Chemical mapping of a 177-nucleotide RNA with DMS and 2A3.
RNA sequence: GGGAACGACUCGAGUAGAGUCGAAAAAAAGGCUUAUCAAGAGAGGUGGAGGGACUGGCCCGAUGAAACCCGGCAGCCAGAAAUGGUGCCAAUUCCUGCAGAGGAAACGUUGAAAGAUGAGCCGAAACAACUUAAUUUUCUUCGGAAAAUUAAGUUGAAAAGAAACAACAACAACAAC
Reactivity to DMS in 0.01 (KOAc 150mM, MgCl2 10mM, bicine 150mM(pH8.5), 24C), signal-to-noise 2, nucleotides 027 to 126: a020a040a140g020g000c000u000u000a010u000c000a060a140g010a220g020a120g030g010u000g010g020a050g000g000g010a300c120u000g000g010c010c030c020g000a070u000g010a110a090a070c040c080c060g020g000c090a060g030c000c010a010g010a050a080a130u010g010g010u000g010c000c020a070a130u000u000c000c010u000g010c300a100g010a050g020g000a040a090a080c120g000u000u000g000a150a080a110g000a010u020g000a020g010c020c000g030a090a060a170
Reactivity to 2A3 in 0.01 (KOAc 150mM, MgCl2 10mM, bicine 150mM(pH8.5), 24C), signal-to-noise 1, nucleotides 027 to 126: a020a000a020g040g000c060u050u030a040u010c040a090a000g050a010g010a090g180g000u000g020g010a010g010g000g010a010c040u070g090g120c000c000c000g090a170u010g020a020a010a020c000c000c000g000g040c010a050g210c000c000a000g010a010a020a010u010g020g020u010g000c030c000a000a000u020u060c000c000u030g020c040a020g040a010g220g040a040a070a030c070g090u070u190g090a100a080a000g020a010u020g000a000g000c010c000g010a020a000a010